[RMDB]
RNA sequence: GGGAACGACUCGAGUAGAGUCGAAAAUCAAUGUGGAUAUCCUGUGAGGUUACUCUCAUGGGCUCUGUCCAAGUGGCGUAUGGGAGCGUAGUGCUUUAUGGCGCAGUGACGUACAAUCCCUUUCCACACCGUGAGUUAAUUUCGAUUAACUCACGGUAAAAGAAACAACAACAACAAC
Reactivity to 2A3 in 0.01 (KOAc 150mM, MgCl2 10mM, bicine 150mM(pH8.5), 24C), signal-to-noise 8, nucleotides 027 to 126: u150c050a010a110u160g020u090g100g000a010u010a030u240c000c010u010g000u000g000a000g060g010u220u190a070c090u090c000u000c130a000u020g000g000g000c000u000c000u000g010u000c010c000a000a000g000u000g020g010c070g050u140a120u100g020g010g000a010g010c010g010u040a010g020u040g010c000u030u220u160a240u300g030g000c010g000c020a050g060u040g160a010c020g010u040a020c050a030a110u050c000c000c000u000u040u010c010c000a010c000
Reactivity to DMS in 0.01 (KOAc 150mM, MgCl2 10mM, bicine 150mM(pH8.5), 24C), signal-to-noise 6, nucleotides 027 to 126: u020c060a080a080u040g000u000g000g000a020u010a000u030c000c000u000g010u000g000a020g010g000u000u050a100c300u050c010u000c000a010u000g000g000g000c010u010c000u000g000u000c000c000a030a090g020u000g000g000c300g000u020a070u010g000g010g010a060g010c150g000u020a070g010u000g010c010u000u010u020a100u040g000g010c020g010c010a160g000u000g010a080c090g000u000a060c120a110a270u000c010c000c000u000u000u010c010c020a080c140

The record gives the reactivity of an RNA of 177 nucleotides to 2A3 and DMS. The reactions ran in a buffer of 150 mM KOAc, 10 mM MgCl2 and 150 mM bicine (pH 8.5), at 24 C. Source: RMDB libraries RFM100 and RFMREP, as collected in RNAgym. DMS adducts were read by reverse transcription with MarathonRT. In probing experiments dimethyl sulfate is read out at A N1 and C N3, which are open when not base-paired.